The record gives the reactivity of an RNA of 177 nucleotides to DMS and 2A3. Values cover nucleotides 27 to 126.
RNA sequence: GGGAACGACUCGAGUAGAGUCGAAAAACGCGAUAUACGUAUCGCGAAAAGGUGAUGAGCACUCUCGAACCUGACGGGCAGGAUGAUGAGCGGAUUCCUGGCUGAUAGCCUGACUACGGUCAGGCAACCAGUAAUGCCAAUUCGUUGGCAUUACUGGAAAAGAAACAACAACAACAAC
Reactivity to DMS in 0.01 (KOAc 150mM, MgCl2 10mM, bicine 150mM(pH8.5), 24C), signal-to-noise 6, nucleotides 027 to 126: a110c010g020c000g000a010u000a040u010a130c180g000u000a010u010c010g010c010g010a050a050a100a040g010g000u000g000a160u010g000a070g010c210a100c240u010c030u000c010g010a120a050c010c010u000g010a190c110g010g010g010c020a040g000g010a060u000g000a190u040g010a090g020c100g010g000a170u000u010c010c010u000g020g000c050u000g010a110u020a110g010c000c010u000g010a000c010u010a100c170g020g000u000c000a000g010g010c020a010a030
Reactivity to 2A3 in 0.01 (KOAc 150mM, MgCl2 10mM, bicine 150mM(pH8.5), 24C), signal-to-noise 9, nucleotides 027 to 126: a000c010g000c000g000a000u010a000u020a030c300g070u020a010u010c000g000c010g030a020a030a010a020g040g000u050g030a140u100g010a050g040c070a030c120u150c000u010c040g030a050a030c000c010u030g030a040c030g010g000g050c010a010g030g010a030u070g010a020u080g040a050g060c050g010g030a020u040u030c000c000u020g080g040c010u030g040a130u140a050g000c000c000u000g000a000c000u020a020c150g070g000u000c000a000g000g000c000a000a010